The data come from the RNA Mapping Database (RMDB), library 15KLIB. An RNA of 170 nucleotides, treated with 2A3 and DMS and read out base by base. The reactions ran in a buffer of 150 mM KOAc, 10 mM MgCl2 and 150 mM bicine (pH 8.5), at 24 C. DMS adducts were read by reverse transcription with MarathonRT. 2A3 adducts were read by reverse transcription with SuperScript II with manganese. The DMS profile rests on 6,528 reads.

RNA sequence: GGGAACGACUCGAGUAGAGUCGAAAAGGAAUGGGGGGAGAUCGACCGGGUCCCGCAGAACCCGAUGGAGUUCCCAACCUUCCCCUUACGGACAAAAGCUGGUCCCGAUAGGGGCACCCACAAUAGGCAACAGCCCUCUUCGGAGGGCUGAAAAGAAACAACAACAACAAC
Reactivity to 2A3 in 0.01 (KOAc 150mM, MgCl2 10mM, bicine 150mM(pH8.5), 24C), signal-to-noise 3, nucleotides 027 to 129: g070g000a090a150u050g000g000g000g000g000g000a070g050a060u010c010g070a000c050c000g000g010g000u020c080c070c060g040c020a050g030a040a010c010c010c010g000a000u010g040g010a050g070u050u040c000c000c010a010a040c010c000u030u040c000c000c010c000u000u030a020c020g010g030a020c020a050a210a020a030g150c170u140g030g000u010c000c010c020g030a050u120a050g000g000g000g000c010a100c000c000c010a040c060a030a130u170a150g030g080c020a040a030
Reactivity to DMS in 0.01 (KOAc 150mM, MgCl2 10mM, bicine 150mM(pH8.5), 24C), signal-to-noise 5, nucleotides 027 to 129: g030g060a080a010u070g000g070g000g000g030g000a050g020a060u010c030g030a070c040c030g000g010g060u000c020c080c180g050c150a110g040a110a030c030c020c000g000a110u030g000g020a060g020u020u000c060c020c010a070a070c010c020u020u010c000c000c000c000u010u030a210c300g040g020a050c030a130a090a070a060g070c170u060g070g000u000c050c040c010g030a130u020a020g000g000g010g080c290a060c050c010c070a130c250a120a020u010a050g040g170c100a130a160